[RMDB]
Source: RMDB library 15KLIB, as collected in RNAgym. An RNA of 170 nucleotides, treated with 2A3 and DMS and read out base by base.
RNA sequence: GGGAACGACUCGAGUAGAGUCGAAAAACCGGCUCAUCUCGGCAAGGGGCGGCAGUCCUCAGUGCUCUUACUCUUUCCUAUAAAGAGGAGACUGCUGGACUCGCCGCCCGAGCCCGAGCAUGGGCCCAAGCACUCAGCUUCGGCUGAGUGAAAAGAAACAACAACAACAAC
Reactivity to 2A3 in 0.01 (KOAc 150mM, MgCl2 10mM, bicine 150mM(pH8.5), 24C), signal-to-noise 9, nucleotides 027 to 129: a010c010c000g000g000c000u000c000a010u000c000u000c000g000g000c040a100a160g050g000g000g000c010g000g000c010a000g000u000c000c000u010c010a030g000u140g300c020u010c020u070u200a290c010u020c010u040u030u060c070c090u190a160u260a300a020a000g010a010g020g000a000g000a000c000u010g040c060u000g000g000a000c000u010c070g000c000c000g000c000c000c000g000a000g000c020c000c000g000a000g000c020a000u000g000g000g000c000c000c000a030a010g040
Reactivity to DMS in 0.01 (KOAc 150mM, MgCl2 10mM, bicine 150mM(pH8.5), 24C), signal-to-noise 6, nucleotides 027 to 129: a080c050c020g010g020c040u020c020a040u000c000u000c000g020g050c020a170a150g090g000g020g030c000g000g070c040a030g010u030c000c010u010c020a020g000u100g100c050u040c010u040u140a300c040u040c020u000u000u000c260c190u040a140u160a130a030a030g000a030g060g010a010g030a030c010u000g000c150u030g000g020a030c010u010c150g040c020c000g020c040c000c020g000a030g020c150c020c040g030a020g040c130a000u030g000g000g000c000c010c080a010a090g060

2A3 adducts were read by reverse transcription with SuperScript II with manganese.